[RMDB]
RNA sequence: GGGAACGACUCGAGUAGAGUCGAAAAAUCAGAGGGCGCUAUCAUGCAAACUAGGAUUGUCUGCUCAUGCACAGAACCAACUACCGAUAACUGACAGUGCAUGAAGGUUAGUUAUUCCAUAUUAAUUAAAACUCGUAAUUCUUCGGAAUUACGAGAACCUACUCUCCUGCUUCGGCAGGAGAGUAGGAAAAGAAACAACAACAACAAC
Reactivity to 2A3 in 0.01 (KOAc 150mM, MgCl2 10mM, bicine 150mM(pH8.5), 24C), signal-to-noise 1, nucleotides 027 to 156: a000u040c030a000g010a010g010g070g010c010g050c110u110a080u300c080a030u260g080c050a010a000a010c020u030a050g040g020a020u040u040g010u080c000u000g060c000u020c000a000u040g060c020a030c000a010g080a100a060c090c000a090a090c060u240a200c110c040g010a100u090a100a000c030u050g050a030c030a050g000u020g000c000a000u000g020a000a020g040g000u020u000a000g000u000u010a030u140u030c010c010a030u060a070u250u200a210a160u030u300a000a020a070a090c000u000c000g000u000a000a000u000u000c020u000u000c060g060g000a000a000u000u000a000c000g000a000g000a000a000